An RNA of 207 nucleotides, treated with DMS and 2A3 and read out base by base. The RNA was probed in 150 mM KOAc, 10 mM MgCl2 and 150 mM bicine (pH 8.5) at 24 C. DMS adducts were read by reverse transcription with MarathonRT.
RNA sequence: GGGAACGACUCGAGUAGAGUCGAAAAGUUAGGCGAGGCUCCGAUACAAACACAGGUUGCUGAUCUGACGACGUCGAGAGACGCCCAAGAUUAGGACAGGAUAUAUCGAACCAAGGUAUAUCCCCAUAAAACUCGGAACACUUCGGUGUUCCGAGAACUAGGUAGAAAACUUCGGUUUUCUACCUAGAAAAGAAACAACAACAACAAC
Reactivity to DMS in 0.01 (KOAc 150mM, MgCl2 10mM, bicine 150mM(pH8.5), 24C), signal-to-noise 2, nucleotides 027 to 156: g000u010u010a090g010g010c010g000a110g030g020c030u030c040c030g000a160u010a200c060a020a100a120c090a050c040a190g020g010u010u000g040c020u000g000a040u000c010u020g000a190c020g000a010c040g000u010c000g020a300g000a300g010a040c000g000c000c030c070a170a080g020a010u000u000a100g040g020a140c050a060g010g030a010u020a050u010a000u010c000g000a060a300c130c110a110a200g010g000u000a030u000a010u000c010c000c060c050a060u000a050a060a060a160c000u000c000g000g000a000a020c020a010c000u000u000c250g010g010u000g000u000u000c000c010g020a000g000a010a060
Reactivity to 2A3 in 0.01 (KOAc 150mM, MgCl2 10mM, bicine 150mM(pH8.5), 24C), signal-to-noise 3, nucleotides 027 to 156: g010u020u020a030g020g040c050g040a080g040g020c030u050c070c030g010a020u120a150c140a050a190a020c090a030c030a140g120g050u200u150g050c010u010g030a060u000c010u040g000a020c020g000a000c020g000u010c000g000a010g010a020g010a120c010g030c000c020c000a030a000g080a100u130u160a020g050g020a040c090a080g010g000a010u020a010u000a010u010c010g030a100a050c080c040a150a020g000g000u010a000u000a000u010c000c010c000c000a030u180a070a170a030a010c000u000c010g010g010a020a000c000a000c010u060u110c260g040g000u000g000u010u000c000c000g000a000g000a000a000
For 2A3 the reverse transcriptase was SuperScript II with manganese. The 2A3 profile rests on 1,402 reads.